[RMDB]
RNA sequence: GGGAACGACUCGAGUAGAGUCGAAAACGGUUAAUUUUUUGCGAAGGAUAAUAAUCGGUCACCAGCGCUUGCCAGAUUACCGUUGCCGCGCAAACGCCGACGGCCUGCACGAAGCGCAGCGUCAGCAGGUAGGCUGGGAUUUCGAUCCCAGCCUACCAAAAGAAACAACAACAACAAC
Reactivity to 2A3 in 0.01 (KOAc 150mM, MgCl2 10mM, bicine 150mM(pH8.5), 24C), signal-to-noise 1, nucleotides 027 to 126: c030g000g000u040u030a100a160u050u000u000u000u100u150g040c090g060a070a000g080g000a040u000a140a010u080a040a060u110c000g000g030u040c080a040c010c030a040g000c020g000c070u110u110g050c010c040a040g050a130u120u070a000c000c080g070u060u080g090c090c000g000c000g010c090a010a040a210c070g000c000c070g010a010c050g010g030c000c030u010g060c050a070c160g060a100a070g010c000g000c090a000g000c000g030u040c030a020g050c040a000
The record gives the reactivity of an RNA of 177 nucleotides to 2A3. 2A3 adducts were read by reverse transcription with SuperScript II with manganese. The reactions ran in a buffer of 150 mM KOAc, 10 mM MgCl2 and 150 mM bicine (pH 8.5), at 24 C. The 2A3 profile rests on 644 reads. As a SHAPE reagent, 2A3 marks flexible, mostly unpaired nucleotides at the ribose 2'-OH.